This 207-nucleotide RNA was probed chemically with 2A3. Conditions: 150 mM KOAc, 10 mM MgCl2 and 150 mM bicine (pH 8.5), 24 C. Reactivities are given for positions 27 through 156. The 2A3 profile rests on 552 reads.
RNA sequence: GGGAACGACUCGAGUAGAGUCGAAAAGGAGGACAUCUGGUGUGGCAGCCUAAUUGGCACAAGAGCCCGAGCCACGUGGGCAGAAAACAUCCAGGUGGCAAUCAACCAAGUCAGAGCAAUCAUUGGAGAUGAGAAGUAUGUAGAUUACAUGAGUUCACCUGGAGCAAAAAUUCGUUUUUGCUCCAGGAAAAGAAACAACAACAACAAC
Reactivity to 2A3 in 0.01 (KOAc 150mM, MgCl2 10mM, bicine 150mM(pH8.5), 24C), signal-to-noise 1, nucleotides 027 to 156: g070g030a010g000g000a020c000a010u010c030u040g040g000u050g000u040g120g030c020a010g000c060c000u080a150a100u140u090g010g000c010a000c040a150a070g040a000g080c070c000c020g050a030g050c000c000a030c060g150u090g000g000g000c030a000g130a100a100a000a050c020a000u020c010c000a000g020g000u010g000g010c000a000a030u060c000a000a020c030c030a010a020g040u040c020a000g000a010g030c010a040a000u060c010a040u110u180g000g010a070g020a060u120g070a090g010a140a000g110u050a090u170g080u080a000g010a210u030u150a010c030a070u110g080a040g090u150u270c050a030